An RNA of 177 nucleotides, treated with 2A3 and DMS and read out base by base. Values cover nucleotides 27 to 126. For 2A3 the reverse transcriptase was SuperScript II with manganese. The DMS profile rests on 2,766 reads.

[RMDB]
RNA sequence: GGGAACGACUCGAGUAGAGUCGAAAAGUUUCUUUGCAGAGAGACAUGAGCUUGGAAAAGCUACUAGAUUGCUGUUCAUAUGUUUCAGACAGGAUACAAAGUCUAUUUCCAGACAUUCAAAUAGAAGUACAUAUGGAGCAUUCGUGCUCCAUAUGUAAAAAGAAACAACAACAACAAC
Reactivity to 2A3 in 0.01 (KOAc 150mM, MgCl2 10mM, bicine 150mM(pH8.5), 24C), signal-to-noise 3, nucleotides 027 to 126: g000u000u020u010c010u010u030u090g050c090a020g030a010g010a010g020a090c030a100u070g050a030g040c010u080u090g030g020a060a060a000a010g020c010u060a060c020u020a060g040a100u020u100g130c020u020g020u080u000c000a000u120a050u200g110u060u040u030c050a040g010a050c010a000g030g030a050u020a140c060a010a120a010g000u000c000u090a180u050u030u000c010c000a010g010a030c000a070u090u100c050a060a090a040u190a060g040a130a010g090
Reactivity to DMS in 0.01 (KOAc 150mM, MgCl2 10mM, bicine 150mM(pH8.5), 24C), signal-to-noise 4, nucleotides 027 to 126: g000u000u000u000c000u000u000u010g040c160a140g000a060g020a090g000a040c080a090u000g000a070g020c030u000u010g000g010a060a110a040a040g000c010u000a070c100u010a030g000a130u000u000g020c010u010g020u000u010c070a100u000a080u000g010u000u000u010c100a160g000a050c070a050g010g010a060u010a090c130a080a070a060g000u000c020u000a100u000u010u000c060c020a140g020a050c090a080u010u000c080a040a080a100u010a090g010a060a100g000